Conditions: 150 mM KOAc, 10 mM MgCl2 and 150 mM bicine (pH 8.5), 24 C. Structure probing data (DMS and 2A3) for a 177-nucleotide construct. Values cover nucleotides 27 to 126. For 2A3 the reverse transcriptase was SuperScript II with manganese. The DMS profile rests on 1,115 reads.

[RMDB]
RNA sequence: GGGAACGACUCGAGUAGAGUCGAAAAUGAGAAUACUUUUAGUACAAGCGAGUACACGCAGUAUACUGCUACUUGUGUGAGAAUACUUUUAGUACAAGCGAGUACACGCAGUAUACUGCCACUUGUGAUCCGGAAGGAGGUUCGCCUCCUUCCGGAUAAAAGAAACAACAACAACAAC
Reactivity to DMS in 0.01 (KOAc 150mM, MgCl2 10mM, bicine 150mM(pH8.5), 24C), signal-to-noise 1, nucleotides 027 to 126: u010g020a140g010a050a140u040a000c020u010u000u000u000a100g000u010a020c140a100a140g000c000g000a080g010u050a050c060a120c300g000c010a010g000u000a060u000a000c000u000g000c000u040a070c000u000u000g000u070g030u000g010a090g000a190a270u000a000c000u000u020u080u150a020g000u020a000c120a010a240g000c000g010a030g000u000a000c300a120c300g000c020a000g000u000a030u000a000c000u000g000c000c200a000c000u010u000g000u010g000
Reactivity to 2A3 in 0.01 (KOAc 150mM, MgCl2 10mM, bicine 150mM(pH8.5), 24C), signal-to-noise 3, nucleotides 027 to 126: u270g000a010g060a070a090u150a140c030u000u070u120u150a090g080u200a030c080a170a020g040c040g050a010g020u140a030c100a010c070g010c000a000g000u000a000u000a000c000u000g000c000u010a030c000u010u030g040u040g060u060g110a120g120a070a020u020a040c030u020u160u080u200a040g020u000a030c060a090a000g010c020g020a010g020u060a020c030a000c220g000c010a000g000u000a000u000a020c020u000g000c000c000a000c000u000u000g020u070g010